Chemical mapping of a 177-nucleotide RNA with DMS and 2A3. Values cover nucleotides 27 to 126. The DMS profile rests on 1,270 reads. It was measured as part of the RMDB library TTRDEL. High 2A3 reactivity points to a flexible backbone, as in loops and unpaired stretches. The reactions ran in a buffer of 150 mM KOAc, 10 mM MgCl2 and 150 mM bicine (pH 8.5), at 24 C.
RNA sequence: GGGAACGACUCGAGUAGAGUCGAAAAGAUAUGGACCGACGACAAUGACGUACCGUAACAUCAUUCGGAAACGAAUGUGGGUAUAAGACAGUCGGGGUCCUAAGUCAAACAGACGUUCGCGUCUGAACGUAAGUUCUGCGUUCGCGCAGAACUUACGAAAAGAAACAACAACAACAAC
Reactivity to DMS in 0.01 (KOAc 150mM, MgCl2 10mM, bicine 150mM(pH8.5), 24C), signal-to-noise 2, nucleotides 027 to 126: g010a050u000a300u000g030g010a030c000c000g000a250c030g020a020c010a080a110u000g010a140c300g010u000a000c000c010g000u010a060a160c170a030u000c030a000u000u000c000g000g000a070a050a170c050g030a020a010u010g040u040g000g000g010u000a010u000a140a110g000a120c190a030g000u000c000g040g000g000g000u000c000c020u000a080a100g000u020c010a080a180a300c040a030g010a040c050g000u010u010c170g000c090g020u020c010u000g000a080a100
Reactivity to 2A3 in 0.01 (KOAc 150mM, MgCl2 10mM, bicine 150mM(pH8.5), 24C), signal-to-noise 2, nucleotides 027 to 126: g030a010u020a030u120g010g000a000c050c030g100a290c010g020a030c200a200a300u170g020a050c120g050u020a020c030c020g080u100a130a070c060a200u300c010a010u000u050c000g000g070a020a060a030c000g000a030a000u040g020u020g120g000g030u020a020u030a040a120g100a040c050a000g030u030c010g000g020g020g020u000c000c020u010a070a000g070u000c000a080a210a010c020a040g000a030c010g000u150u050c290g050c040g100u000c010u020g080a060a010